Structure probing data (2A3 and DMS) for a 177-nucleotide construct. For DMS, 35,202 sequencing reads were counted. DMS adducts were read by reverse transcription with MarathonRT. Values cover nucleotides 27 to 126.
[RMDB]
RNA sequence: GGGAACGACUCGAGUAGAGUCGAAAAGGGCCGCGGACGGCGGGAUCGUCGACCGUGGCACCCUCGGGGGCGGUGUAGAUGACGAUCAGGUCGCCGUCGGUGUCGCGGCCGAAGAUGUCGUCGGCCACCAUAAUCGGAUAUUCGUAUCCGAUUAUGGAAAAGAAACAACAACAACAAC
Reactivity to 2A3 in 0.01 (KOAc 150mM, MgCl2 10mM, bicine 150mM(pH8.5), 24C), signal-to-noise 7, nucleotides 027 to 126: g070g010g000c020c010g010c050g050g010a020c010g000g010c010g020g030g010a020u030c000g020u000c010g040a020c010c010g020u070g090g020c000a050c000c010c000u050c080g040g000g010g000g010c030g000g020u100g040u110a180g040a300u290g030a050c030g010a020u020c030a040g150g200u150c030g010c060c000g010u020c010g000g020u110g030u040c020g000c010g020g000c000c000g000a010a010g020a030u170g080u110c030g010u010c010g040g030c000c000a020
Reactivity to DMS in 0.01 (KOAc 150mM, MgCl2 10mM, bicine 150mM(pH8.5), 24C), signal-to-noise 9, nucleotides 027 to 126: g010g010g020c010c010g020c010g010g010a020c000g010g030c000g020g010g010a010u000c000g020u000c010g010a040c040c040g030u000g020g020c060a030c010c000c020u010c250g020g000g010g000g020c300g000g010u010g020u010a110g010a130u010g000a020c010g010a020u000c010a150g020g020u020c030g010c000c000g020u000c020g010g010u010g020u010c030g010c020g010g010c000c000g000a020a040g000a070u000g010u000c030g010u000c030g010g010c040c050a290